[RMDB]
RNA sequence: GGGAACGACUCGAGUAGAGUCGAAAAUGUCUUCUCUUCCCCCGCGCUGCUUCCUCGAUUCGGAUCGGCUCAUCUCGACUAGAGGCGGCGGUCCUCAGUGCUCUUACUCUUUUCUGAUAAAGAGGAGACUGCUGGACUCGCCGCCCAAGUUCGAGCACCUGACAUAAUUCUUCGGAAUUAUGUCAGGAAAAGAAACAACAACAACAAC
Reactivity to 2A3 in 0.01 (KOAc 150mM, MgCl2 10mM, bicine 150mM(pH8.5), 24C), signal-to-noise 2, nucleotides 027 to 156: u240g060u050c040u100u000c010u080c000u040u030c010c010c000c000c000g000c000g050c040u000g010c000u060u020c010c020u060c100g220a220u170u070c060g010g000a010u000c010g010g080c070u080c010a120u100c010u000c010g010a010c000u020a090g020a110g220g000c000g020g020c030g010g010u010c000c010u020c000a030g000u100g200c040u000c000u060u300a300c010u000c010u000u100u100u150c170u260g080a170u150a300a030a000g000a000g000g000a000g000a020c000u020g040c030u010g000g010a010c030u030c180g000c000c020g000c030c000c000a000a030g000u010u110c010g000a010g010c010a010